[RMDB]
RNA sequence: GGGAACGACUCGAGUAGAGUCGAAAAUUAAUGAGGACCAAAUGGCUGUAAAGCCCGUAAUGCUCGAAUUGGUCCUAAACAGCCAAAUCGGGCAAAUCGAGCAAUCCCAACGACAGCGACAAAACAACUAGAUACACUGGUUCGCCAGUGUAUCUAGAAAAGAAACAACAACAACAAC
Reactivity to DMS in 0.01 (KOAc 150mM, MgCl2 10mM, bicine 150mM(pH8.5), 24C), signal-to-noise 3, nucleotides 027 to 126: u000u020a110a070u000g010a110g010g000a100c060c090a050a100a120u000g000g010c000u000g010u000a040a150a170g020c000c020c080g030u000a070a160u000g020c000u000c000g020a010a080u000u000g000g010u010c030c020u010a020a080a100c300a250g000c020c000a010a010a080u010c010g020g000g030c010a000a100a070u000c020g020a020g000c000a100a100u000c020c010c000a080a070c130g010a040c020a020g000c010g010a050c130a040a080a100a090c180a040a220
Reactivity to 2A3 in 0.01 (KOAc 150mM, MgCl2 10mM, bicine 150mM(pH8.5), 24C), signal-to-noise 1, nucleotides 027 to 126: u110u080a060a100u150g070a080g100g040a000c000c000a000a010a190u120g060g000c010u000g010u060a050a100a080g000c000c000c000g000u010a080a040u060g020c000u000c000g000a040a060u020u020g000g000u000c000c020u010a010a030a000c020a000g000c010c000a000a000a060u050c020g000g000g000c000a040a050a050u190c000g000a000g010c000a020a160u010c010c000c000a000a040c020g100a000c000a000g010c010g040a050c080a060a090a030a010c050a020a070